[RMDB]
RNA sequence: GGGAACGACUCGAGUAGAGUCGAAAAAGCCGGAGCUUACUUCGUUAACAUGUUGAAUACAUUCUUACUCGUCUGCGAAUCAAACAUCACAGUCUUCAGCCAGAUCUUUAACACGAACAACUUCCAGGACCUACACCUUCUGCAGACAAUCGCCAGAAUCACAGCGGAUAUUCGUAUCCGCUGUGAUAAAAGAAACAACAACAACAAC
Reactivity to 2A3 in 0.01 (KOAc 150mM, MgCl2 10mM, bicine 150mM(pH8.5), 24C), signal-to-noise 3, nucleotides 027 to 156: a010g100c050c020g010g040a040g000c020u090u090a040c010u080u060c040g140u090u140a050a030c020a120u080g030u030u080g060a080a050u130a170c050a080u130u020c020u060u050a040c020u040c130g060u000c000u010g000c010g040a040a060u150c110a160a080a080c040a040u120c070a020c010a080g020u000c000u010u060c040a000g030c010c000a030g020a090u000c010u040u110u060a060a030c070a020c090g030a070a010c030a050a010c050u120u000c030c000a020g050g060a080c000c000u020a020c020a050c060c000u040u030c020u090g020c000a030g010a090c000a030a100u100c040g000c030c050a000g080a080